[RMDB]
RNA sequence: GGGAACGACUCGAGUAGAGUCGAAAACAGUGUCGAGCGUCCGAAUCUGGAAGAUCUCGUUGCCGGUCAGCAGGUCGUGGUACUCAUCAACCUUGGCAGGGAGUUCGUCCAAGAAGUCUCGGCACUUCUCGAUGAACUCUUCACGGGGUUCGGGCAGUCAUCCCUUGCUUUUCGAAGCAAGGGAUGAAAAAGAAACAACAACAACAAC
Reactivity to 2A3 in 0.01 (KOAc 150mM, MgCl2 10mM, bicine 150mM(pH8.5), 24C), signal-to-noise 2, nucleotides 027 to 156: c030a000g000u010g020u010c010g000a000g020c060g110u040c080c070g150a090a160u050c020u020g020g020a020a000g000a020u010c010u010c060g300u020u000g000c020c010g030g040u070c070a040g040c040a010g020g050u050c060g180u230g100g060u170a080c040u100c120a140u060c000a060a030c020c040u130u300g020g000c010a000g000g080g000a000g000u010u020c010g010u000c020c000a030a010g030a050a010g120u060c010u000c000g000g000c000a000c000u010u010c000u000c000g050a080u130g000a040a000c000u000c000u150u140c200a050c100g000g000g000g010u040u000c010g030g000g010c070a030g070